Structure probing data (2A3 and DMS) for a 177-nucleotide construct. Values cover nucleotides 27 to 126. Source: RMDB library OK1LIB, as collected in RNAgym. 2A3 adducts were read by reverse transcription with SuperScript II with manganese.

RNA sequence: GGGAACGACUCGAGUAGAGUCGAAAAGCUCGUAGGUUCAGAUGAUGGGCCCGCAUCUGUACGAAAGACAGACGAAAGUCCAGCCUACGUGCAUGAGCACGCGGGCCCCGUGCUCUACAGCAAAAGAAUGCUAUCACUAGUUCGCUAGUGAUAGCAUAAAAGAAACAACAACAACAAC
Reactivity to 2A3 in 0.01 (KOAc 150mM, MgCl2 10mM, bicine 150mM(pH8.5), 24C), signal-to-noise 2, nucleotides 027 to 126: g000c010u000c030g000u000a000g020g010u050u110c110a030g010a100u070g020a030u070g060g000g000c000c000c010g000c000a010u000c000u030g080u080a120c070g120a160a070a030g070a010c020a020g030a020c030g090a170a050a010g010u010c010c010a010g000c000c000u000a000c010g000u000g000c000a050u100g000a000g010c030a010c030g010c030g020g000g000c000c010c000c000g000u000g000c000u000c000u030a060c030a090g080c070a020a070a050a030g210a080
Reactivity to DMS in 0.01 (KOAc 150mM, MgCl2 10mM, bicine 150mM(pH8.5), 24C), signal-to-noise 4, nucleotides 027 to 126: g000c000u000c010g020u000a000g000g030u000u010c120a090g010a050u020g010a050u020g000g000g000c000c000c010g000c010a020u000c010u000g010u020a080c050g000a110a120a130g000a080c060a040g020a000c040g000a100a120a190g010u000c020c130a100g000c010c000u010a040c000g010u000g010c000a070u020g000a030g000c000a020c020g000c090g010g010g000c010c010c010c010g030u010g010c030u000c010u020a060c090a080g000c160a070a070a090a050g030a130